Structure probing data (DMS and 2A3) for a 177-nucleotide construct. For DMS the reverse transcriptase was MarathonRT. For 2A3 the reverse transcriptase was SuperScript II with manganese. The RNA was probed in 150 mM KOAc, 10 mM MgCl2 and 150 mM bicine (pH 8.5) at 24 C. The 2A3 profile rests on 1,149 reads.
RNA sequence: GGGAACGACUCGAGUAGAGUCGAAAAUUACGAGGUAUCAGCACUUUUCUUUCAUUGGGGGAAGGUGUGAGGAAAGUAACAAACAGCAGCGGAGUUUUAAACUUUAAAUAGACAGGUCUGAGUGCCUACGAUUACUUUAGUUCGCUAAAGUAAUCGUAAAAGAAACAACAACAACAAC
Reactivity to DMS in 0.01 (KOAc 150mM, MgCl2 10mM, bicine 150mM(pH8.5), 24C), signal-to-noise 2, nucleotides 027 to 126: u010u010a070c080g020a090g000g050u000a030u000c080a200g040c070a030c030u010u010u000u010c030u010u000u030c090a100u000u020g030g010g010g000g020a070a030g010g000u000g020u000g000a060g000g000a050a050a050g010u010a060a100c150a070a070a070c040a040g030c050a010g020c060g000g000a060g000u000u020u000u030a100a040a110c050u000u010u010a040a050a100u000a070g010a070c120a030g010g010u000c040u020g000a090g000u020g030c030c030u010
Reactivity to 2A3 in 0.01 (KOAc 150mM, MgCl2 10mM, bicine 150mM(pH8.5), 24C), signal-to-noise 2, nucleotides 027 to 126: u160u080a050c040g080a020g060g020u060a060u160c030a010g010c010a000c040u000u060u070u040c010u060u210u180c080a240u100u250g060g020g010g020g010a000a030g030g000u030g010u030g030a010g010g080a050a030a020g020u050a040a010c000a050a180a000c000a020g020c000a010g010c080g030g020a070g020u020u070u070u170a040a100a020c020u050u060u110a070a080a050u090a040g040a020c060a010g030g000u000c020u080g040a020g050u050g040c000c010u000